[RMDB]
RNA sequence: GGGAACGACUCGAGUAGAGUCGAAAACACUAAAUGAUUACACGCAAUUAACGUUGCGUUUGAGGGAGCGUAAACACGUGAAUAAGCAAAUAUUUUUGAUGUUUAACCCAGUAUCUAAACUGAAUUGGACGUUGUCGUUGUUCGCAACGACAACGUCAAAAGAAACAACAACAACAAC
Reactivity to 2A3 in 0.01 (KOAc 150mM, MgCl2 10mM, bicine 150mM(pH8.5), 24C), signal-to-noise 1, nucleotides 027 to 126: c050a010c010u050a020a070a140u180g050a090u180u150a060c040a020c020g030c030a030a000u010u040a160a020c050g000u010u000g100c000g040u030u000u080g150a100g000g010g000a040g000c050g040u020a020a070a070c070a030c050g020u000g020a080a050u130a180a000g130c000a000a150a040u140a090u100u100u010u150u200g220a190u030g020u020u010u060a030a030c000c000c000a000g060u070a050u000c000u160a010a060a080c070u080g100a070a110u190u080g190